[RMDB]
Structure probing data (DMS and 2A3) for a 177-nucleotide construct. Conditions: 150 mM KOAc, 10 mM MgCl2 and 150 mM bicine (pH 8.5), 24 C. Source: RMDB library OK2TST, as collected in RNAgym. DMS (dimethyl sulfate) methylates the pairing face of unpaired adenines and cytosines. The 2A3 profile rests on 2,807 reads.
RNA sequence: GGGAACGACUCGAGUAGAGUCGAAAAGUCGGUACGCAGGUCUGCUCGUUCGGUAACGUUGCUUCCGUACUGCCAGUGCCCCUCGGUCUGGGGCUUUUGGUCCAUUGCAGCCAUGUUUUCCACGGAAUGACUCAUUAGGAUUCGUCCUAAUGAGUCAAAAAGAAACAACAACAACAAC
Reactivity to DMS in 0.01 (KOAc 150mM, MgCl2 10mM, bicine 150mM(pH8.5), 24C), signal-to-noise 7, nucleotides 027 to 126: g010u010c040g010g010u010a040c130g030c090a090g020g010u000c040u000g010c020u000c070g000u010u010c130g010g010u010a060a060c060g010u000u010g010c040u000u000c060c020g010u010a030c040u010g000c030c010a060g020u010g000c010c010c000c010u000c100g020g010u010c150u000g010g000g010g010c020u000u000u000u000g020g010u000c050c040a110u010u010g010c070a070g010c030c020a080u010g000u000u000u000u000c020c040a130c190g010g000a150a150
Reactivity to 2A3 in 0.01 (KOAc 150mM, MgCl2 10mM, bicine 150mM(pH8.5), 24C), signal-to-noise 2, nucleotides 027 to 126: g030u030c060g000g040u010a010c050g000c010a020g060g040u070c030u040g050c040u040c060g030u120u060c090g030g130u160a050a030c020g060u070u160g020c000u010u030c000c000g010u060a000c010u040g000c010c010a030g020u010g040c030c000c000c000u040c050g130g070u070c070u050g000g000g000g000c010u010u040u050u020g010g010u060c010c030a070u020u120g000c010a010g030c000c020a020u050g070u020u030u010u010c000c050a060c070g090g020a180a100